[RMDB]
RNA sequence: GGGAACGACUCGAGUAGAGUCGAAAACGGUUAACCACCUCAAAGCUACGCGCUAAUGAUAAUAUCUUAUCAGUUAGAUUCACUGCUAACAAAAUUGUUGGUGGUGCUCCUACAUGGUUUAAUGCGUUACGCAAAUACGGUUCGCCGUAUUUGCGUAAAAAGAAACAACAACAACAAC
Reactivity to DMS in 0.01 (KOAc 150mM, MgCl2 10mM, bicine 150mM(pH8.5), 24C), signal-to-noise 1, nucleotides 027 to 126: c060g010g010u000u000a090a010c030c000a080c090c000u000c140a100a140a050g010c020u000a120c120g000c140g020c000u020a150a110u010g000a050u000a020a080u000a280u000c300u010u000a010u000c000a090g000u020u000a000g000a170u000u000c080a010c110u000g000c000u000a000a020c000a020a090a060a140u000u000g020u000u000g010g040u000g000g010u000g010c300u000c040c000u020a010c200a140u000g000g000u000u000u000a030a020u000g010c070g000u000
Reactivity to 2A3 in 0.01 (KOAc 150mM, MgCl2 10mM, bicine 150mM(pH8.5), 24C), signal-to-noise 2, nucleotides 027 to 126: c000g020g020u030u050a030a040c000c000a010c010c020u080c000a110a120a010g000c030u040a040c080g050c000g000c040u000a050a030u080g060a000u000a060a010u100a050u030c070u040u050a010u020c000a060g040u100u040a010g010a030u040u040c000a000c030u000g010c000u020a010a020c000a060a140a230a300u130u050g010u030u010g020g000u000g020g000u000g030c040u030c010c020u060a050c010a090u070g020g000u040u070u180a040a030u120g080c040g020u020